[RMDB]
RNA sequence: GGGAACGACUCGAGUAGAGUCGAAAAGAUAUGGAUACUUGGAUAACUGCGACAGAGCGAUAAGAAGGUAUCGGAAACGAUAUGCUUCUUUUGACGCUCCUAGCAGUUAUCCAAGUAUCCUAAGUCACAUUGUGCGUAUGUUCGCAUACGCACAAUGAAAAGAAACAACAACAACAAC
Reactivity to DMS in 0.01 (KOAc 150mM, MgCl2 10mM, bicine 150mM(pH8.5), 24C), signal-to-noise 3, nucleotides 027 to 126: g030a040u000a300u000g000g000a020u000a000c000u000u000g010g000a010u000a000a010c000u000g010c000g010a260c300a080g000a020g010c000g000a190u010a040a000g000a010a010g000g010u000a010u000c000g000g000a130a050a200c020g000a020u000a000u010g020c000u000u000c000u000u000u000u000g020a270c130g010c000u000c020c010u000a300g000c000a010g020u010u000a010u000c000c000a010a000g010u000a000u010c000c000u000a010a110g020u010c020a250